[RMDB]
RNA sequence: GGGAACGACUCGAGUAGAGUCGAAAAAAUGAAAGCUACAAGCAGGAGUUAUUGAGGAAAGAUGAAAAGCUAAGAGAAUUUGAAAAUGAAUUAAGUCACCUCAAGCUUACAGGGAUUGAUGACAAGAGUAGUCAAGUACAUUCGUGUACUUGACUACAAAAGAAACAACAACAACAAC
Reactivity to DMS in 0.01 (KOAc 150mM, MgCl2 10mM, bicine 150mM(pH8.5), 24C), signal-to-noise 4, nucleotides 027 to 126: a070a030u000g020a070a080a070g020c030u000a050c150a080a110g010c050a050g020g000a070g020u000u000a100u010u010g020a070g010g000a080a040a070g010a040u000g000a070a060a060a080g000c040u020a040a030g000a150g000a110a040u000u010u000g010a060a050a060a090u000g000a080a040u010u000a050a250g020u000c020a040c060c020u000c030a030a050g010c050u000u000a050c130a070g010g030g000a070u000u000g010a060u010g000a050c100a050a080g000a130
Reactivity to 2A3 in 0.01 (KOAc 150mM, MgCl2 10mM, bicine 150mM(pH8.5), 24C), signal-to-noise 1, nucleotides 027 to 126: a010a020u200g040a090a020a010g030c070u080a040c080a090a000g040c020a020g010g030a020g040u090u140a110u100u090g010a010g000g010a130a110a140g020a020u020g020a070a060a010a020g030c010u040a090a020g070a000g040a100a100u140u190u110g100a080a090a060a100u130g040a000a030u060u070a070a000g020u000c010a040c040c010u010c010a010a000g000c000u040u060a050c060a030g000g000g070a080u020u100g080a050u070g030a030c040a090a050g060a020